[RMDB]
Notes:
An RNA of 207 nucleotides, treated with 2A3 and DMS and read out base by base. Conditions: 150 mM KOAc, 10 mM MgCl2 and 150 mM bicine (pH 8.5), 24 C.
RNA sequence: GGGAACGACUCGAGUAGAGUCGAAAAAGAAAGGAGAACCUGGACUCCUGGGUGCCUUUGUCUCACCACACAAUCACCUCCCAGGAAGGCUGUCAUCCAAUCACUCCUGUGGAAUCUCUCUGCCACUUUGUUGUAAAGAAAGUCAGCCCCAGUGAAGACUUAGCUUAUGCUUCGGCAUAAGCUAAGUAAAAGAAACAACAACAACAAC
Reactivity to 2A3 in 0.01 (KOAc 150mM, MgCl2 10mM, bicine 150mM(pH8.5), 24C), signal-to-noise 1, nucleotides 027 to 156: a000g080a030a050a000g020g010a050g020a030a040c030c080u090g000g040a050c020u000c000c010u030g000g020g000u050g000c010c030u010u050u080g060u000c040u050c120a090c100c030a020c000a040c060a020a080u120c030a030c040c000u030c010c000c010a010g050g000a040a030g050g050c040u070g070u080c040a130u040c020c080a000a100u050c030a030c040u040c010c030u010g020u040g020g070a130a160u030c080u000c010u030c030u090g010c020c010a060c000u100u030u100g040u000u010g000u050a030a060a240g060a050a090a010g030u030c030a020g000c020c000c050c030a040g020u100g120a110a190g020
Reactivity to DMS in 0.01 (KOAc 150mM, MgCl2 10mM, bicine 150mM(pH8.5), 24C), signal-to-noise 1, nucleotides 027 to 156: a100g000a170a030a080g000g000a100g010a090a050c060c050u010g040g010a150c000u000c010c000u000g000g030g000u010g000c020c010u000u000u000g010u010c010u000c150a230c090c050a120c080a030c040a080a060u000c010a040c040c020u010c010c000c000a080g000g030a070a100g000g000c000u030g000u010c090a130u000c050c030a030a140u010c050a080c020u000c040c020u030g000u000g000g020a100a070u000c000u000c050u040c010u000g000c030c010a070c070u000u000u010g000u000u000g020u000a030a110a110g000a070a060a100g020u000c030a080g030c030c000c020c010a210g080u010g020a090a170g000
For 2A3, 561 sequencing reads were counted. It was measured as part of the RMDB library OK3TST.